[RMDB]
RNA sequence: GGGAACGACUCGAGUAGAGUCGAAAAGCUUGCACCGCUGCCGUACUUAGGGUGGCCCGGUCCAAGUAACCGUAUUCAGGGCUGGUCUAAUGACUCGCCAUCUUAAGCAUAAUCCAGCACUGGCGUCACGCUUAAUGCCGUUCGCGGCAUUAAGCGUAAAAGAAACAACAACAACAAC
Reactivity to DMS in 0.01 (KOAc 150mM, MgCl2 10mM, bicine 150mM(pH8.5), 24C), signal-to-noise 1, nucleotides 027 to 126: g000c020u010u020g000c300a000c020c000g000c110u010g000c000c000g010u000a120c220u050u020a160g020g000g060u010g000g000c110c300c020g020g000u070c120c150a000a060g000u050a070a170c000c040g000u000a140u000u000c160a110g000g000g050c030u000g000g030u080c070u000a130a000u000g020a160c000u000c220g000c040c000a080u000c020u090u000a160a000g000c010a060u000a170a130u020c010c000a000g000c000a060c010u000g030g000c300g030u020c050
Reactivity to 2A3 in 0.01 (KOAc 150mM, MgCl2 10mM, bicine 150mM(pH8.5), 24C), signal-to-noise 3, nucleotides 027 to 126: g050c040u030u010g000c000a030c060c020g000c010u020g000c000c020g160u180a170c150u140u200a100g040g020g020u020g000g000c010c050c020g000g000u030c050c000a060a000g030u010a050a060c050c000g040u080a120u070u110c030a030g010g000g000c010u010g020g050u000c000u100a170a140u150g080a170c000u040c040g150c070c010a060u050c040u080u110a020a010g040c000a020u080a100a060u060c030c000a000g000c000a000c000u030g030g000c030g060u040c050

Source: RMDB library OK1LIB, as collected in RNAgym. This 177-nucleotide RNA was probed chemically with DMS and 2A3. The RNA was probed in 150 mM KOAc, 10 mM MgCl2 and 150 mM bicine (pH 8.5) at 24 C. 2A3 adducts were read by reverse transcription with SuperScript II with manganese.